The record gives the reactivity of an RNA of 177 nucleotides to DMS and 2A3. Values cover nucleotides 27 to 126. The DMS profile rests on 1,321 reads.

RNA sequence: GGGAACGACUCGAGUAGAGUCGAAAAUCUGUUUACAAGUUAUCGUUAAGUCCAUGUCUGACUACGAUUCCGUAAUCAGAAGCCAGAUUGCGUCAAGUCCGACAUGGACUCUUGGCAGAACUGAUCACCAGCGAGUAAAUUUCGAUUUACUCGCUGGAAAAGAAACAACAACAACAAC
Reactivity to DMS in 0.01 (KOAc 150mM, MgCl2 10mM, bicine 150mM(pH8.5), 24C), signal-to-noise 2, nucleotides 027 to 126: u010c030u010g000u000u030u020a140c060a110a070g000u010u010a100u010c180g000u010u010a060a040g020u000c000c000a030u000g000u000c000u000g000a020c000u000a180c130g020a080u010u000c180c010g040u000a000a000u000c010a060g010a140a110g020c150c150a100g010a060u010u000g000c010g030u000c060a090a030g010u000c020c050g010a050c040a010u010g000g000a020c000u000c020u000u010g000g020c050a070g020a030a060c080u000g010a080u020c160a220
Reactivity to 2A3 in 0.01 (KOAc 150mM, MgCl2 10mM, bicine 150mM(pH8.5), 24C), signal-to-noise 1, nucleotides 027 to 126: u000c020u010g060u030u120u140a110c020a100a000g030u130u120a200u280c140g080u100u180a120a010g000u000c000c000a020u000g020u000c020u020g000a050c010u040a130c150g040a010u130u070c030c050g000u010a000a000u010c000a000g130a300a000g030c010c000a020g000a000u000u020g000c030g040u030c030a040a020g000u050c010c000g000a050c000a000u000g010g000a000c000u010c000u010u000g030g030c000a010g020a030a080c050u060g050a020u080c010a010
The reactions ran in a buffer of 150 mM KOAc, 10 mM MgCl2 and 150 mM bicine (pH 8.5), at 24 C. As a SHAPE reagent, 2A3 marks flexible, mostly unpaired nucleotides at the ribose 2'-OH.